[RMDB]
RNA sequence: GGGAACGACUCGAGUAGAGUCGAAAAGAUAUGGAGACAGAAAGCGCGAUUGUAUAACAGGCUAGUAUGUCGGAAACGACAUACGAAGCCUGUUAUACAAUCGAACUACGCUUCUGUCUCCUAAGUCGCAUAGGAUUGACUUCGGUCAAUCCUAUGCAAAAGAAACAACAACAACAAC
Reactivity to DMS in 0.01 (KOAc 150mM, MgCl2 10mM, bicine 150mM(pH8.5), 24C), signal-to-noise 1, nucleotides 027 to 126: g010a070u020a300u000g000g000a020g000a030c000a000g010a050a040a080g000c010g000c000g000a020u010u000g000u010a010u000a000a010c020a000g000g030c010u030a300g000u000a000u000g030u000c000g020g020a140a080a250c010g020a030c000a010u000a000c000g010a090a110g000c000c000u000g000u000u000a000u020a000c000a010a010u000c000g000a010a020c230u010a300c010g000c020u000u010c000u000g010u000c000u010c000c000u000a010a000g000u000c090
About this RNA:
The record gives the reactivity of an RNA of 177 nucleotides to DMS. Reactivities are given for positions 27 through 126. Source: RMDB library TTRINS, as collected in RNAgym. For DMS the reverse transcriptase was MarathonRT.